Chemical mapping of a 177-nucleotide RNA with 2A3 and DMS.
The data come from the RNA Mapping Database (RMDB), library M2PK50.
For 2A3, 1,444 sequencing reads were counted.
Reactivities are rounded to 0.1 and cut off at 0 and 3.
DMS adducts were read by reverse transcription with MarathonRT.
[RMDB]
RNA sequence: GGGAACGACUCGAGUAGAGUCGAAAAGUCCCGGAGUUCGCUCCGGGACAAAGAACCUCAAUUUGACGCAAACUUCCGCGUCAUCGCGAGGAAACGAGGAAAAAAUCACGGAGUUCGCUCCGUGAAAGAAUUCGGUAAUGUUCGCAUUACCGAAUUCAAAAGAAACAACAACAACAAC
Reactivity to 2A3 in 0.01 (KOAc 150mM, MgCl2 10mM, bicine 150mM(pH8.5), 24C), signal-to-noise 1, nucleotides 027 to 126: g010u010c020c000c000g020g000a010g020u060u230c180g010c110u000c010c020g010g030g000a000c000a000a000a000g010a030a060c010c000u010c010a050a100u050u000u050g010a000c010g000c000a060a170a250c180u250u040c120c130g000c010g000u000c000a000u000c030g000c050g010a010g010g000a100a030a000c120g060a140g040g030a100a020a000a030a010a070u040c010a000c000g020g010a020g000u070u030c090g100c050u000c000c000g010u000g010a010a000a010
Reactivity to DMS in 0.01 (KOAc 150mM, MgCl2 10mM, bicine 150mM(pH8.5), 24C), signal-to-noise 2, nucleotides 027 to 126: g010u000c000c000c000g000g060a010g000u000u000c210g010c000u000c020c000g040g000g010a000c000a010a070a110g000a150a100c000c000u010c020a020a300u000u000u000g010a000c000g050c010a080a160a060c250u010u000c300c140g000c000g000u000c010a000u020c010g000c300g000a040g000g000a010a040a070c150g000a110g020g040a000a000a080a100a190a080u000c000a000c000g000g010a040g020u000u010c140g020c010u000c000c000g020u000g000a000a010a020